[RMDB]
RNA sequence: GGGAACGACUCGAGUAGAGUCGAAAAGGGGUCCAGGGAGAGAUGGUACAGACAUGCUCUACUGAAGCCUCCACGGUAGAGCAACAGCUGUACGAUCUCUUUGAUCUGGACGGAGGCACCCAAAAGAGAUUGGAGCAGUUCGCUGCUCCAAUCUCAAUCGAAUUUAAUUCUUCGGAAUUAAAUUCGAAAAAGAAACAACAACAACAAC
Reactivity to 2A3 in 0.01 (KOAc 150mM, MgCl2 10mM, bicine 150mM(pH8.5), 24C), signal-to-noise 1, nucleotides 027 to 156: g050g010g110g030u010c000c000a000g020g000g000a020g010a010g000a000u040g100g010u000a000c010a020g140a100c070a130u100g010c000u010c000u000a010c000u020g060a080a030g010c000c000u000c000c010a010c010g050g000u010a000g010a000g020c020a030a020c020a040g000c000u000g000u010a000c020g010a000u000c000u000c010u150u150u000g000a000u040c000u000g000g000a000c000g000g000a000g040g020c010a020c000c000c000a000a080a020a050g010a000g000a000u010u020g000g000a000g000c010a000g010u020u190c190g040c100u000g020c010u000c000c000a000a000u010c000u000c000a000a010
An RNA of 207 nucleotides, treated with 2A3 and read out base by base. The data come from the RNA Mapping Database (RMDB), library RNAMAK. Conditions: 150 mM KOAc, 10 mM MgCl2 and 150 mM bicine (pH 8.5), 24 C.